Structure probing data (DMS) for a 177-nucleotide construct. It was measured as part of the RMDB library OK2TRN.

RNA sequence: GGGAACGACUCGAGUAGAGUCGAAAAGACGCGCGUGCGCAGCUCGAUCCGCGCGUCGCCCUGCGCGAUCCGCUCGCGCAGCGCCUGCGCCGCGUUGCGCACGAUAUUGAGGAGCGCCUGGAUCAGAGGCUAUCACUGCGUUCGCGCAGUGAUAGCCAAAAGAAACAACAACAACAAC
Reactivity to DMS in 0.01 (KOAc 150mM, MgCl2 10mM, bicine 150mM(pH8.5), 24C), signal-to-noise 1, nucleotides 027 to 126: g000a040c020g020c030g020c040g090u000g020c010g010c000a020g000c080u000c020g010a090u000c200c300g000c030g000c020g010u000c120g000c000c040c000u010g020c020g000c010g010a080u000c190c110g000c130u000c030g000c010g010c000a030g050c230g000c050c070u030g010c030g050c010c060g020c070g010u000u000g040c010g020c000a060c060g050a050u040a040u040u000g000a090g020g000a260g010c130g000c050c110u000g020g020a130u020c090a140g030a230